RNA sequence: GGGAACGACUCGAGUAGAGUCGAAAACAAACAACAACAACAACAACCAUUAUCAUUAGCCCACCUAUAUAUCUAUAUGUCCCACCCCUAAUGAUAAUGCCCAUAUAGAUAUACAACAACAACAAAAGGGUAUAAGAUAGUUCGCUAUCUUAUACCCAAAAGAAACAACAACAACAAC
Reactivity to 2A3 in 0.01 (KOAc 150mM, MgCl2 10mM, bicine 150mM(pH8.5), 24C), signal-to-noise 2, nucleotides 027 to 126: c040a030a110a010c030a020a000c020a040a000c010a020a000c000a050a030c020a110a020c040c040a010u020u040a040u060c040a010u050u060a060g030c030c060c010a090c010c030u020a030u020a030u000a010u080c030u010a040u010a020u050g080u050c010c000c000a010c020c020c000c000u030a010a000u040g030a010u040a060a010u080g060c000c000c000a000u030a000u000a040g020a010u020a000u000a040c000a100a000c000a090a030c010a040a000c010a040a150a010a050
Reactivity to DMS in 0.01 (KOAc 150mM, MgCl2 10mM, bicine 150mM(pH8.5), 24C), signal-to-noise 2, nucleotides 027 to 126: c100a030a070a120c140a060a060c160a090a120c270a130a070c040a090a070c070a110a160c150c010a050u000u000a010u010c000a010u020u030a070g020c260c060c000a030c130c060u020a070u010a010u000a000u020c040u020a110u020a000u000g000u020c000c000c000a160c070c040c080c040u000a010a010u000g010a020u000a050a010u020g010c070c070c010a000u080a060u180a000g000a030u120a020u100a130c180a070a080c100a060a050c140a000a010c090a100a040a010a110